[RMDB]
RNA sequence: GGGAACGACUCGAGUAGAGUCGAAAAGAUAUGGACUUGGGACGCAGACGGGAAUGGGAUUCAACGGAUCGGAAACGAUCCGCGCAUUUCCCAUUCCCGUCUGAACUACGUCAUAAGUCCUAAGUCACAGUAACAAUUACUUCGGUAAUUGUUACUGAAAAGAAACAACAACAACAAC
Reactivity to DMS in 0.01 (KOAc 150mM, MgCl2 10mM, bicine 150mM(pH8.5), 24C), signal-to-noise 4, nucleotides 027 to 126: g010a060u010a300u000g000g000a020c000u000u000g020g000g020a020c010g000c000a010g010a020c000g010g000g000a020a000u000g000g010g000a010u000u000c280a190a070c010g000g000a020u000c000g000g000a130a120a260c010g000a010u010c000c010g010c060g000c250a300u010u000u000c000c000c000a010u000u000c000c000c000g000u000c010u000g000a010a060c160u020a300c020g010u000c020a050u000a020a010g000u000c000c000u000a020a080g000u000c030a250